[RMDB]
RNA sequence: GGGAACGACUCGAGUAGAGUCGAAAAGAUAUGGACUUACUACCCACCGAUACAUUGGCGAUGAAAGAUUGUAUGUCGGAAACGACAUACAAUCUGGAGCCAGGGUAUCGAGGUAAGUCCUAAGUCACAAGUAUGGAUAGUUCGCUAUCCAUACUUGAAAAGAAACAACAACAACAAC
Reactivity to 2A3 in 0.01 (KOAc 150mM, MgCl2 10mM, bicine 150mM(pH8.5), 24C), signal-to-noise 3, nucleotides 027 to 126: g170a060u300a250u300g010g000a000c000u020u010a010c020u280a290c020c020c030a020c040c000g000a000u010a000c020a050u020u020g010g010c040g300a300u040g050a080a050a010g010a000u000u020g000u000a010u010g010u000c000g000g000a090a120a020c010g000a010c000a000u000a010c000a000a000u010c000u000g010g020a000g000c000c000a010g000g020g000u010a010u000c010g000a000g000g000u000a000a010g000u000c000c000u010a020a010g130u080c050a020
Reactivity to DMS in 0.01 (KOAc 150mM, MgCl2 10mM, bicine 150mM(pH8.5), 24C), signal-to-noise 7, nucleotides 027 to 126: g010a130u010a240u010g000g000a010c010u000u000a000c000u000a100c040c020c030a300c200c000g000a010u000a010c000a040u010u000g010g010c000g000a110u010g000a140a130a030g000a010u000u000g010u000a000u010g010u010c000g000g000a080a100a270c000g020a000c000a000u000a000c000a000a000u000c000u000g000g010a070g020c000c000a010g000g000g010u000a000u000c000g010a080g010g010u000a010a010g010u000c010c000u000a030a110g010u010c160a180